[RMDB]
RNA sequence: GGGAACGACUCGAGUAGAGUCGAAAAACAGCCGUACGCGGCUGAACCUUAAUCCUUGCAACGAACCUGAGCCACUGAUUCAGUAAAAUACUCAGUGGCACAUGUUUGUUGUGAGGGUCAAAAGAAAACAGCUUUUUCCAUUCGUGGAAAAAGCUGUAAAAGAAACAACAACAACAAC
Reactivity to 2A3 in 0.01 (KOAc 150mM, MgCl2 10mM, bicine 150mM(pH8.5), 24C), signal-to-noise 2, nucleotides 027 to 126: a000c010a000g000c000c000g050u110a100c220g020c000g110g000c000u000g030a000a000c000c000u000u110a030a010u040c000c000u000u000g000c000a020a000c000g010a000a010c040c030u020g000a030g020c000c000a000c000u030g010a010u120u130c030a030g220u220a080a050a060a090u120a030c020u010c000a000g000u000g000g050c000a000c000a000u000g000u010u000u000g000u000u000g010u000g000a000g000g010g000u000c020a000a030a050a000g160a030a110a000
Structure probing data (2A3) for a 177-nucleotide construct.
2A3 adducts were read by reverse transcription with SuperScript II with manganese.
The data come from the RNA Mapping Database (RMDB), library RFM100.